[RMDB]
RNA sequence: GGGAACGACUCGAGUAGAGUCGAAAACAUAUGGUUCUUCCUCAAAAGUGGGAAGCUUAUCCAUUUUUGACACUCAUCCAGAUUCCAGUGUGUUGCUAUCCGCAGAGAUAUUAUUUAGAAAUUUGAAACUAAAUUUAUGGUUCGCCAUAAAUUUAGUAAAAGAAACAACAACAACAAC
Reactivity to DMS in 0.01 (KOAc 150mM, MgCl2 10mM, bicine 150mM(pH8.5), 24C), signal-to-noise 4, nucleotides 027 to 126: c080a080u050a080u000g010g000u030u010c040u000u000c020c040u000c050a100a030a100a130g000u010g000g000g000a070a100g020c300u050u010a050u040c020c000a020u000u000u010u000u000g010a090c120a070c060u010c090a070u020c060c040a080g000a060u010u000c020c000a070g010u010g010u000g020u000u000g000c070u000a050u010c030c030g000c080a070g000a130g000a080u020a040u030u040a080u020u000u020a080g000a080a110a090u000u000u000g000a120a070
Reactivity to 2A3 in 0.01 (KOAc 150mM, MgCl2 10mM, bicine 150mM(pH8.5), 24C), signal-to-noise 5, nucleotides 027 to 126: c030a050u130a070u080g020g000u030u020c010u010u010c000c000u050c020a160a190a040a070g150u220g030g010g010a030a010g050c040u160u100a080u080c000c010a040u040u040u000u020u120g010a010c010a000c020u030c010a080u030c030c030a030g020a110u090u000c010c000a010g040u030g000u000g030u120u050g010c000u040a050u020c020c020g040c120a010g060a000g020a060u010a060u260u110a130u060u140u090a100g050a040a180a070u110u140u120g040a110a060